[RMDB]
RNA sequence: GGGAACGACUCGAGUAGAGUCGAAAACGCAGACGCUGUCGACGAUAACGCGGAUCUUCCCGGCUCAUCGCCGCGGUGUCGCGCUGGGCGCAUGGGGCACCGUCGCCAGUGUCGCCAGCCUGGUGGGAAGCAUCUCUGUAUUCGUACAGAGAUGCUUAAAAGAAACAACAACAACAAC
Reactivity to 2A3 in 0.01 (KOAc 150mM, MgCl2 10mM, bicine 150mM(pH8.5), 24C), signal-to-noise 3, nucleotides 027 to 126: c070g030c050a070g010a020c030g050c020u050g010u100c020g010a010c000g040a050u070a200a050c030g030c110g070g030a090u070c100u110u120c070c020c010g000g030c040u040c040a100u060c090g000c010c000g110c040g100g010u090g100u130c090g010c000g020c080u080g010g050g020c030g000c060a110u130g020g020g040g010c010a030c040c000g040u040c020g020c010c010a020g000u000g000u020c020g000c030c010a010g000c000c000u060g000g030u080g050g040g040
Reactivity to DMS in 0.01 (KOAc 150mM, MgCl2 10mM, bicine 150mM(pH8.5), 24C), signal-to-noise 4, nucleotides 027 to 126: c080g000c080a070g010a030c040g020c010u010g010u000c020g010a030c000g010a100u000a110a130c080g020c070g010g000a140u000c140u000u010c060c010c000g010g000c030u000c140a030u010c060g010c020c020g020c070g010g000u000g010u000c080g010c030g010c020u000g010g000g000c020g050c120a070u000g010g000g010g030c080a090c060c020g010u000c020g020c050c010a080g000u000g010u000c000g020c030c030a110g000c010c000u000g010g010u010g000g000g000
The record gives the reactivity of an RNA of 177 nucleotides to 2A3 and DMS. For 2A3, 3,947 sequencing reads were counted. Reactivities are given for positions 27 through 126.